[RMDB]
RNA sequence: GGGAACGACUCGAGUAGAGUCGAAAAAGAACUGCAAACGAUAAUAAUCUCUAUGUGGGUGCGCCAGCUUUAGCUGCAGCUUAAUCCAACGAGGAUUGAAGGUGUGACGGGCAACAGACCCGGAAAAACUAGCUCCAUAGUUCGCUAUGGAGCUAGUAAAAGAAACAACAACAACAAC
Reactivity to DMS in 0.01 (KOAc 150mM, MgCl2 10mM, bicine 150mM(pH8.5), 24C), signal-to-noise 3, nucleotides 027 to 126: a080g010a120a070c090u010g020c060a070a060a130c080g010a060u020a110a080u030a060a100u010c030u000c030u020a120u030g000u010g020g000g000u010g000c220g020c070c000a030g010c040u020u010u030a070g010c000u010g000c110a050g000c020u000u030a020a020u000c020c030a060a150c150g010a140g010g000a020u000u000g020a090a110g000g010u000g000u020g000a090c050g020g020g000c070a100a110c170a090g000a100c000c010c020g000g020a050a050a010a080
Reactivity to 2A3 in 0.01 (KOAc 150mM, MgCl2 10mM, bicine 150mM(pH8.5), 24C), signal-to-noise 3, nucleotides 027 to 126: a010g020a050a010c030u060g040c050a050a090a050c090g040a010u050a110a070u130a050a020u160c070u020c030u070a090u140g050u070g030g000g000u030g020c010g050c030c030a010g000c000u100u140u120a030g000c020u030g000c050a030g000c010u020u060a020a000u000c000c000a020a050c080g060a040g040g000a020u010u090g070a050a070g110g000u030g010u020g050a000c000g010g000g030c000a120a080c020a160g110a200c010c000c010g020g000a010a100a000a000
Structure probing data (DMS and 2A3) for a 177-nucleotide construct. The 2A3 profile rests on 1,999 reads. Values cover nucleotides 27 to 126. The RNA was probed in 150 mM KOAc, 10 mM MgCl2 and 150 mM bicine (pH 8.5) at 24 C. For DMS the reverse transcriptase was MarathonRT.